Chemical mapping of a 207-nucleotide RNA with 2A3 and DMS. For 2A3, 4,746 sequencing reads were counted. 2A3 adducts were read by reverse transcription with SuperScript II with manganese.
[RMDB]
RNA sequence: GGGAACGACUCGAGUAGAGUCGAAAAAGUAAGCUCCGUUUUGUAUUGCCUGAUGUGCUUAGCGGGUAUUUAUUCGGGAUAGUAAGUUGAACGUUACAAGUGUCGUACCAACUUAUGAAUCUUAAACACUUGAGAUGAGUGUGGUAGCGUUAUCAAGCAUUGAGGUAUUGUUCGCAAUACCUCAAUGAAAAGAAACAACAACAACAAC
Reactivity to 2A3 in 0.01 (KOAc 150mM, MgCl2 10mM, bicine 150mM(pH8.5), 24C), signal-to-noise 6, nucleotides 027 to 156: a000g150u100a050a010g030c050u040c040c020g010u000u030u030u060g080u040a080u020u140g020c000c010u030g030a040u060g030u040g010c010u040u020a010g010c030g000g030g020u060a110u020u150u020a100u090u100c040g020g000g010a010u010a020g010u010a030a000g000u000u010g020a050a000c020g030u060u080a050c060a120a090g040u050g020u170c010g000u000a100c030c000a000a000c000u000u000a000u020g050a030a050u020c010u050u080a050a050a000c050a020c010u030u050g020a040g040a130u210g010a050g090u040g000u040g060g020u070a050g010c040g040u020u040a230u260c050a060a000g060
Reactivity to DMS in 0.01 (KOAc 150mM, MgCl2 10mM, bicine 150mM(pH8.5), 24C), signal-to-noise 4, nucleotides 027 to 156: a140g020u000a070a100g020c030u000c020c020g020u000u000u010u000g010u010a060u000u000g020c010c030u000g010a070u010g030u000g000c040u000u000a060g030c040g000g010g030u000a040u000u000u000a100u020u000c050g010g010g010a050u000a230g020u000a020a000g010u000u000g020a060a050c020g010u000u000a270c080a080a100g030u000g030u000c020g030u000a150c050c010a010a030c020u000u000a030u000g010a140a140u000c080u010u000a050a050a040c010a030c030u010u000g010a170g020a150u000g000a070g020u000g020u010g010g020u000a050g010c080g030u010u000a110u000c050a080a170g000
The reactions ran in a buffer of 150 mM KOAc, 10 mM MgCl2 and 150 mM bicine (pH 8.5), at 24 C.